[RMDB]
RNA sequence: GGGAACGACUCGAGUAGAGUCGAAAAAGUACACUCGAGGAGUGGAAGGCGGGGAGGGCGGGGAGGAGUGUUACCCUACGGGAACUGCUGAGUGCCCCUGACGUCCAGACCCUCCCCCGUCCGGGAGAAGCAUGACCCUUCGGGGUCAUGAAAAGAAACAACAACAACAAC
Reactivity to DMS in 0.01 (KOAc 150mM, MgCl2 10mM, bicine 150mM(pH8.5), 24C), signal-to-noise 4, nucleotides 027 to 129: a100g000u030a100c080a050c040u020c000g050a090g010g040a070g050u040g000g000a140a100g000g000c060g060g030g030g000a060g010g010g050c180g000g000g000g000a080g020g010a110g060u030g030u000u000a110c000c000c000u060a140c170g000g000g000a170a050c040u000g030c100u040g030a000g010u080g020c060c030c030c020u020g030a130c110g000u060c020c000a150g030a200c040c010c010u020c050c020c020c060c010g030u040c000c000g020g050g030a060g000a080a070g040
Reactivity to 2A3 in 0.01 (KOAc 150mM, MgCl2 10mM, bicine 150mM(pH8.5), 24C), signal-to-noise 4, nucleotides 027 to 129: a030g080u080a010c020a010c020u010c010g020a020g020g040a030g040u080g010g030a070a040g030g010c040g010g000g010g020a090g020g000g080c040g020g030g000g000a040g020g000a030g020u060g080u040u110a130c010c000c020u030a040c070g020g000g030a050a010c060u070g030c040u070g100a010g080u070g050c000c000c000c010u000g030a060c060g080u040c040c000a040g000a160c000c000c010u000c000c000c000c020c010g040u000c010c010g000g000g000a060g010a010a000g020

An RNA of 170 nucleotides, treated with DMS and 2A3 and read out base by base. The DMS profile rests on 13,124 reads. It was measured as part of the RMDB library 15KLIB. The RNA was probed in 150 mM KOAc, 10 mM MgCl2 and 150 mM bicine (pH 8.5) at 24 C. DMS adducts were read by reverse transcription with MarathonRT. Reactivities are rounded to 0.1 and cut off at 0 and 3.